The record gives the reactivity of an RNA of 177 nucleotides to 2A3 and DMS.
For 2A3, 4,940 sequencing reads were counted.
For DMS the reverse transcriptase was MarathonRT.
[RMDB]
RNA sequence: GGGAACGACUCGAGUAGAGUCGAAAAGAGCUGCCCCAUCCGCGCGACCGCGGCGAUCCCGCCUUCGCCCGUCUGCGCCAUGAGUUGCAUGCCCAGUUUUUCCACCACCGCAAUUAGCUCAUUUUGACAUAUCCAUGACCUUCGGGUCAUGGAUAUGAAAAGAAACAACAACAACAAC
Reactivity to 2A3 in 0.01 (KOAc 150mM, MgCl2 10mM, bicine 150mM(pH8.5), 24C), signal-to-noise 5, nucleotides 027 to 126: g100a010g020c050u040g000c000c010c000c020a050u060c030c010g010c000g010c040g050a050c060c050g020c070g010g010c000g020a060u080c030c020c020g030c020c040u040u050c010g030c020c010c000g010u010c040u140g020c010g000c030c020a070u130g030a030g090u090u070g040c040a040u070g010c000c010c020a020g020u030u020u020u040u020c020c030a050c010c020a030c010c020g000c040a060a140u070u050a070g020c020u020c100a110u040u070u050u170g060a050
Reactivity to DMS in 0.01 (KOAc 150mM, MgCl2 10mM, bicine 150mM(pH8.5), 24C), signal-to-noise 3, nucleotides 027 to 126: g040a070g000c020u020g010c060c000c000c050a130u000c060c080g000c050g020c050g030a070c150c070g020c120g020g000c080g000a060u020c060c050c000g000c010c030u000u000c040g000c010c020c080g000u020c020u010g010c010g010c020c070a070u000g000a120g060u000u000g020c070a060u020g030c040c010c010a050g010u000u010u010u000u010c020c010a130c060c030a070c020c040g000c050a050a020u030u000a110g030c010u030c010a090u030u010u000u000g000a250